[RMDB]
RNA sequence: GGGAACGACUCGAGUAGAGUCGAAAAUGAGAAAUCGUGUUCAGGAGUUCUGCAAGGACAAUAAUCCUGAUCACUGGAAGCAGAGCAACUGGUAAGUUGGACACUUGAUUUUGUUAAGAGCACAAAGGAUUAAUAAAUUAUUCGUAAUUUAUUAAUCAAAAGAAACAACAACAACAAC
Reactivity to DMS in 0.01 (KOAc 150mM, MgCl2 10mM, bicine 150mM(pH8.5), 24C), signal-to-noise 7, nucleotides 027 to 126: u050g010a130g010a050a030a050u010c040g010u000g000u010u000c000a020g020g010a230g010u000u010c010u010g010c180a110a100g000g010a030c100a100a110u050a110a280u000c010c000u010g010a050u020c060a060c080u030g000g010a080a100g010c030a040g000a060g020c050a040a090c020u000g000g010u020a060a060g010u010u010g000g010a050c060a050c040u010u020g000a050u000u000u000u010g010u010u020a060a080g010a130g000c100a060c120a040a090a100g000
Reactivity to 2A3 in 0.01 (KOAc 150mM, MgCl2 10mM, bicine 150mM(pH8.5), 24C), signal-to-noise 9, nucleotides 027 to 126: u250g020a060g080a040a070a020u090c040g000u000g000u020u030c010a010g000g030a050g020u060u020c010u040g090c070a060a110g050g030a040c040a050a100u220a110a070u040c010c010u030g030a060u070c030a020c060u010g050g070a070a040g020c040a010g010a010g030c010a030a060c030u050g060g070u160a090a060g040u080u040g020g020a020c010a010c050u050u080g030a050u070u050u030u010g020u030u070a110a050g040a030g070c090a020c050a110a100a040g100